[RMDB]
RNA sequence: GGGAACGACUCGAGUAGAGUCGAAAAUAACGCCUUUUGGAACUUACCCAGUAAAAUCGCCUUAUGUUGGUAAGUUUAAUAUUUCUAAUAUUAUGGCGGCAAUGAUUGCGGUGUGGAGUAAAGGUACAGUGUCGUAUAUCUUCGGAUAUACGACACUAAAAGAAACAACAACAACAAC
Reactivity to DMS in 0.01 (KOAc 150mM, MgCl2 10mM, bicine 150mM(pH8.5), 24C), signal-to-noise 2, nucleotides 027 to 126: u020a170a120c200g000c020c020u000u010u010u020g000g010a090a030c010u010u000a040c000c030c060a150g000u020a040a010a130a200u020c030g020c030c020u000u000a030u010g050u010u000g010g000u040a030a010g030u000u000u040a110a050u010a030u000u010u000c020u010a040a070u000a010u010u010a050u010g010g000c020g000g010c160a070a060u020g000a070u000u000g000c050g020g000u000g000u000g000g000a090g010u040a040a050a050g000g000u000a060c200
Reactivity to 2A3 in 0.01 (KOAc 150mM, MgCl2 10mM, bicine 150mM(pH8.5), 24C), signal-to-noise 2, nucleotides 027 to 126: u190a070a050c090g030c000c000u080u060u070u120g150g020a000a030c020u000u000a000c010c010c010a030g040u060a020a080a040a120u100c090g060c000c010u080u030a060u050g100u040u010g030g070u070a000a030g020u010u090u090a090a020u120a030u040u140u000c020u050a020a060u010a040u160u100a040u090g000g000c000g000g010c060a050a080u160g080a090u010u100g090c080g040g000u040g010u030g060g030a030g030u100a070a030a000g080g030u040a040c050

Overview: The data come from the RNA Mapping Database (RMDB), library OK1LIB. Chemical mapping of a 177-nucleotide RNA with DMS and 2A3.